This 177-nucleotide RNA was probed chemically with 2A3 and DMS. It was measured as part of the RMDB library M2PK50. The reactions ran in a buffer of 150 mM KOAc, 10 mM MgCl2 and 150 mM bicine (pH 8.5), at 24 C. Values cover nucleotides 27 to 126.
RNA sequence: GGGAACGACUCGAGUAGAGUCGAAAAGGUCCUCGCUUCGGCGAGGACCAGAGCACCACUCCUGCGGGAGUUAAGGCCAAACCGACAGCCGGGUGCAAAGCCAAUUGUUUAAGUUCGCUUAAACAAAGUUGUAGAUAAUGUUCGCAUUAUCUACAACAAAAGAAACAACAACAACAAC
Reactivity to 2A3 in 0.01 (KOAc 150mM, MgCl2 10mM, bicine 150mM(pH8.5), 24C), signal-to-noise 5, nucleotides 027 to 126: g000g000u010c000c000u000c000g010c020u060u100c250g080g010c000g000a000g010g000a000c000c000a000g000a000g000c010a000c000c010a010c000u000c000c000u070g010c250g070g020g000a010g000u030u200a070a020g000g010c010c010a110a130a090c100c040g050a060c040a020g010c010c000g020g000g010u010g000c020a040a020a010g060c030c000a080a150u080u040g010u000u010u010a020a010g010u020u110c250g010c100u000u010a000a000a000c010a020a060a040
Reactivity to DMS in 0.01 (KOAc 150mM, MgCl2 10mM, bicine 150mM(pH8.5), 24C), signal-to-noise 7, nucleotides 027 to 126: g010g010u000c000c000u000c010g030c000u000u010c200g020g010c000g020a000g020g010a000c000c000a010g000a110g010c010a010c010c030a120c000u000c010c010u010g020c190g030g000g000a020g000u000u010a090a140g020g020c010c040a040a100a220c100c070g000a100c150a130g010c010c020g010g020g010u000g010c020a080a080a120g000c090c070a080a130u000u000g000u000u000u000a010a010g010u000u010c220g010c000u000u000a010a010a010c000a030a030a110